[RMDB]
RNA sequence: GGGAACGACUCGAGUAGAGUCGAAAAAGUCAGCUUGGCACAGAACAAUAAAGUUAGGUUUUACUCUAAAGUUAGACUGAUGGGUUUAACAGUAGACCAAUCCACUGUGGGAGCGAGUGGUGUGUAAGAAAAUAUAGUGAUUCGUCACUAUAUUUUCAAAAGAAACAACAACAACAAC
Reactivity to 2A3 in 0.01 (KOAc 150mM, MgCl2 10mM, bicine 150mM(pH8.5), 24C), signal-to-noise 8, nucleotides 027 to 126: a000g080u050c020a010g010c020u030u070g100g000c040a020c020a050g110a160a030c050a100a140u210a250a130a040g060u080u090a060g030g020u030u040u100u060a030c020u050c030u130a170a090a030g010u000u020a030g010a030c020u050g060a280u230g200g010g000u010u010u020a020a010c010a010g030u030a010g030a010c010c010a010a040u040c030c010a020c030u020g010u070g030g050g010a030g020c020g030a020g010u020g000g030u070g010u020g030u090a130a080
Reactivity to DMS in 0.01 (KOAc 150mM, MgCl2 10mM, bicine 150mM(pH8.5), 24C), signal-to-noise 9, nucleotides 027 to 126: a090g010u000c050a110g010c050u000u000g010g020c050a070c070a070g010a090a080c110a080a090u010a060a100a100g000u010u000a110g010g010u000u000u010u000a040c080u000c200u010a060a070a090g010u000u000a020g010a060c020u000g010a140u010g010g010g010u000u000u000a020a030c030a060g010u000a030g000a040c060c050a070a080u010c040c060a080c050u000g020u000g010g000g000a050g010c040g010a060g020u000g010g010u000g010u000g010u000a060a130